[RMDB]
RNA sequence: GGGAACGACUCGAGUAGAGUCGAAAACAACAAGACGAUAUAUAAUGAUACUGAUACAACAACAAAUAUCGGCUAAACAACAACAAUUCAGUAUCAUUUAUAGCCGAUAUAUAUUUCGUCGAACAAAGGGAUGUGAUUCUUUCGAGAAUCACAUCCCAAAAGAAACAACAACAACAAC
Reactivity to 2A3 in 0.01 (KOAc 150mM, MgCl2 10mM, bicine 150mM(pH8.5), 24C), signal-to-noise 2, nucleotides 027 to 126: c050a000a000c010a040a090g000a000c000g000a000u040a030u000a000u000a000a060u010g000a000u000a030c040u000g000a000u070a200c060a120a030c040a090a000c000a010a250a000u030a070u030c000g000g020c000u070a230a120a000c080a070a060c000a040a000c000a030a240u180u020c000a000g030u000a000u000c000a000u000u070u010a100u080a000g000c000c000g000a000u000a000u000a000u000a030u000u030u010c000g000u000c000g010a030a070c080a060a110a030